RNA sequence: GGGAACGACUCGAGUAGAGUCGAAAAGGUGCUCUGAAUGGAGUGCUCUACUGAGAUUAUAAAAUAGAAGGUAAGCUAUUAUCUCUUACAACAGGGCAGGGCUUGUUGGAAUAGGCGGUAAAGUCGAAAAACUACCUCACCUUCGGGUGAGGUAGAACUUAACCUGAAAGUUCGCUUUCAGGUUAAGAAAAGAAACAACAACAACAAC
Reactivity to DMS in 0.01 (KOAc 150mM, MgCl2 10mM, bicine 150mM(pH8.5), 24C), signal-to-noise 1, nucleotides 027 to 156: g000g050u000g030c000u000c000u000g030a190a060u020g000g040a060g020u000g010c010u000c010u000a090c040u020g030a100g000a210u000u010a100u010a090a070a090a090u000a070g010a160a130g030g000u010a060a080g020c100u020a100u010u030a060u010c010u000c030u010u000a120c030a110a110c080a080g040g000g080c060a040g020g010g060c010u010u000g000u010u020g000g000a020a060u000a110g010g020c080g000g000u000a050a060a110g000u010c050g000a040a070a080a080a120c000u000a020c000c000u000c000a000c000c000u000u000c300g140g050g030u010g000a000g000g020u000a000g000a000a030
Reactivity to 2A3 in 0.01 (KOAc 150mM, MgCl2 10mM, bicine 150mM(pH8.5), 24C), signal-to-noise 3, nucleotides 027 to 156: g020g000u020g000c000u010c000u040g200a190a080u240g030g010a010g010u050g010c000u020c030u040a080c040u040g000a000g020a050u090u090a070u230a120a170a110a050u090a050g090a070a010g060g050u140a070a000g030c000u050a030u130u010a060u100c020u000c010u030u090a080c030a150a020c000a090g000g070g000c010a010g010g020g020c020u020u050g020u010u020g010g030a040a050u040a050g040g010c020g010g060u130a050a080a040g030u030c050g000a040a030a000a040a040c010u000a000c000c000u000c000a010c000c010u040u060c190g050g000g000u000g000a000g010g000u000a000g000a000a000
Overview
Conditions: 150 mM KOAc, 10 mM MgCl2 and 150 mM bicine (pH 8.5), 24 C. Chemical mapping of a 207-nucleotide RNA with DMS and 2A3.